[RMDB]
RNA sequence: GGGAACGACUCGAGUAGAGUCGAAAAGGAAUCGACAGUAGAGUGUAUCAUGUCAGUAAGCAUGCCGGGGAAUGGUGGUUUACCCCGUUAUCAAAUGAUUACCCACCAAUAAUUGGCGAAACUCGUUAGGCCCGUCCACACUUCGGUGUGGACGGAACUUAAAUGAUUCUUUCGAGAAUCAUUUAAGAAAAGAAACAACAACAACAAC
Reactivity to 2A3 in 0.01 (KOAc 150mM, MgCl2 10mM, bicine 150mM(pH8.5), 24C), signal-to-noise 5, nucleotides 027 to 156: g040g000a030a050u060c040g040a030c040a030g040u100a040g060a040g070u060g020u020a070u150c040a040u050g060u050c050a040g100u100a070a010g020c020a020u050g050c020c010g010g000g000g000a010a030u050g000g000u000g000g040u040u040u110a060c000c000c000c000g010u040u040a030u050c030a000a020a080u110g030a040u070u120a060c010c000c000a000c010c000a000a010u030a010a010u030u050g040g000c050g040a080a060a090c090u030c060g090u040u030a070g050g070c010c000c000g040u000c010c000a000c010a000c000u020u040c200g080g000u010g000u000g000g000a000c000g000g000a010a000
Reactivity to DMS in 0.01 (KOAc 150mM, MgCl2 10mM, bicine 150mM(pH8.5), 24C), signal-to-noise 3, nucleotides 027 to 156: g010g010a080a070u000c020g020a100c050a080g000u010a100g000a100g030u000g010u010a070u000c030a080u000g010u010c030a140g020u010a050a110g010c030a040u000g010c150c010g020g010g040g010a040a300u000g000g000u000g020g010u010u000u000a200c010c010c010c010g040u000u000a030u000c270a040a050a090u000g030a130u000u000a060c090c010c030a020c000c010a060a140u010a050a130u000u000g030g030c030g020a150a080a070c100u010c040g010u000u000a100g020g010c060c000c000g000u000c010c000a010c030a010c000u000u010c250g040g000u000g020u000g010g000a000c020g020g000a000a030
About this RNA:
The record gives the reactivity of an RNA of 207 nucleotides to 2A3 and DMS. For 2A3 the reverse transcriptase was SuperScript II with manganese. 2A3 is a SHAPE reagent: it acylates the 2'-hydroxyl of flexible nucleotides of all four kinds. The DMS profile rests on 7,535 reads. It was measured as part of the RMDB library M2RFPK.